[RMDB]
RNA sequence: GGGAACGACUCGAGUAGAGUCGAAAAGCAACUGUGGACCUCUGCUACGCAAUCCUCAGAAUGAAGAAGAUGAUGCCGUCCCUGAAGGAUAUGCUCACAGAGAAGGAACCCGGCAUUCCGUUUGACGGAUUAUGACCCUGUUCGCAGGGUCAUAAUCAAAAGAAACAACAACAACAAC
Reactivity to 2A3 in 0.01 (KOAc 150mM, MgCl2 10mM, bicine 150mM(pH8.5), 24C), signal-to-noise 3, nucleotides 027 to 126: g050c010a030a110c090u060g030u170g240g300a300c010c010u000c010u060g030c020u090a020c040g000c010a000a060u000c010c000u000c000a060g060a130a080u250g050a080a120g080a060a020g020a090u140g020a050u190g120c050c010g030u020c000c030c000u040g060a110a030g040g020a000u120a100u260g000c000u020c010a040c010a010g040a010g010a040a070g030g020a050a020c040c010c000g000g020c000a020u010u020c000c010g030u070u070u180g070a040c030g010
Reactivity to DMS in 0.01 (KOAc 150mM, MgCl2 10mM, bicine 150mM(pH8.5), 24C), signal-to-noise 4, nucleotides 027 to 126: g020c090a050a110c080u000g030u000g000g010a170c110c010u000c020u010g020c040u010a140c270g010c010a040a060u010c000c010u010c030a040g000a070a120u010g010a150a080g000a160a060g000a090u010g000a080u000g020c050c040g020u000c030c110c000u000g010a050a030g000g000a030u000a050u000g010c010u010c300a080c050a030g000a060g000a140a090g020g010a110a080c040c040c040g000g000c060a130u000u000c020c020g000u000u000u000g000a170c220g000